[RMDB]
RNA sequence: GGGAACGACUCGAGUAGAGUCGAAAAGAAGAGGCGUCUAAGCAGUCUUAUGCUAUUGCCACCAUCAAAGAAAUUGUUGGUGAGCGCCAACUAUUACUUGUGUGGGAGGCUGGCAAGUCCAAACCACUAGCUGCAGACUUCGGUCUGCAGAAAAGAAACAACAACAACAAC
Reactivity to 2A3 in 0.01 (KOAc 150mM, MgCl2 10mM, bicine 150mM(pH8.5), 24C), signal-to-noise 7, nucleotides 027 to 129: g110a040a000g020a010g020g020c030g020u040c080u090a030a040g000c010a040g030u030c040u090u150a120u120g000c000u050a070u130u270g020c000c000a010c000c000a010u060c030a010a060a060g120a040a050a050u040u030g010u010u000g000g010u080g130a100g030c140g000c030c000a010a000c000u020a010u070u040a060c020u060u040g040u010g000u020g110g010g010a140g010g000c010u010g030g000c050a080a020g030u000c030c000a040a030a040c030c020a050c100u050a000g020
Reactivity to DMS in 0.01 (KOAc 150mM, MgCl2 10mM, bicine 150mM(pH8.5), 24C), signal-to-noise 6, nucleotides 027 to 129: g030a080a080g000a120g040g010c110g030u020c060u030a090a090g020c030a060g010u020c060u060u050a110u040g020c020u020a080u060u070g050c030c020a190c010c030a020u050c030a030a040a070g000a030a020a040u000u000g040u000u000g010g020u010g050a150g030c140g050c000c000a030a070c030u000a090u000u010a060c070u020u000g030u040g050u050g000g050g000a170g010g020c010u040g000g020c070a060a100g010u070c040c100a070a050a080c120c090a120c060u030a000g020
The record gives the reactivity of an RNA of 170 nucleotides to 2A3 and DMS. The 2A3 profile rests on 14,600 reads. In probing experiments dimethyl sulfate is read out at A N1 and C N3, which are open when not base-paired. Conditions: 150 mM KOAc, 10 mM MgCl2 and 150 mM bicine (pH 8.5), 24 C. It was measured as part of the RMDB library 15KLIB.